[RMDB]
RNA sequence: GGGAACGACUCGAGUAGAGUCGAAAAGAAACGCAAGGCCGCCGACCGACGGGAUAUUGUGGGGCUUACCACAGGGGACGCGGCGUUAUCACUUGCCUUUUAAGCCGACCGUCUGGGCUGCAUACAAACCACCCAACUAUCUUCGGAUAGUUGGGAACGUUGUGAAAUACUUCGGUAUUUCACAACGAAAAGAAACAACAACAACAAC
Reactivity to DMS in 0.01 (KOAc 150mM, MgCl2 10mM, bicine 150mM(pH8.5), 24C), signal-to-noise 1, nucleotides 027 to 156: g000a090a100a070c070g010c020a070a080g110g010c030c020g000c020c010g020a210c020c010g020a300c100g000g060g070a090u000a050u000u010g000u000g000g000g030g080c270u000u000a050c000c040a060c020a070g010g020g000g040a170c060g000c030g000g030c000g030u010u000a070u010c180a300c020u000u010g000c000c070u040u000u040u010a090a110g000c000c020g000a160c090c020g020u000c030u030g000g020g000c020u000g000c060a100u000a110c070a010a140a110c030c020a130c000c000c000a000a010c000u060a010u000c000u000u020c190g030g000a010u000a000g020u000u000g040g000g020a010a010
Reactivity to 2A3 in 0.01 (KOAc 150mM, MgCl2 10mM, bicine 150mM(pH8.5), 24C), signal-to-noise 2, nucleotides 027 to 156: g060a010a070a010c080g000c010a000a030g070g000c010c010g030c010c010g040a050c000c000g060a050c030g020g120g000a100u060a130u250u080g020u060g010g010g040g060c110u060u040a040c030c020a010c020a000g000g000g020g000a000c020g010c000g000g050c010g000u020u040a020u060c010a030c080u010u030g010c010c010u010u050u010u060a030a030g010c030c010g050a100c030c000g030u040c020u060g060g000g030c000u010g080c030a050u100a100c050a010a120a050c050c030a060c000c030c000a000a000c000u000a000u000c010u020u050c130g080g000a000u000a000g000u000u000g020g010g000a010a000

Chemical mapping of a 207-nucleotide RNA with DMS and 2A3. Reactivities are rounded to 0.1 and cut off at 0 and 3. For DMS, 1,547 sequencing reads were counted. For DMS the reverse transcriptase was MarathonRT. Reactivities are given for positions 27 through 156. Conditions: 150 mM KOAc, 10 mM MgCl2 and 150 mM bicine (pH 8.5), 24 C.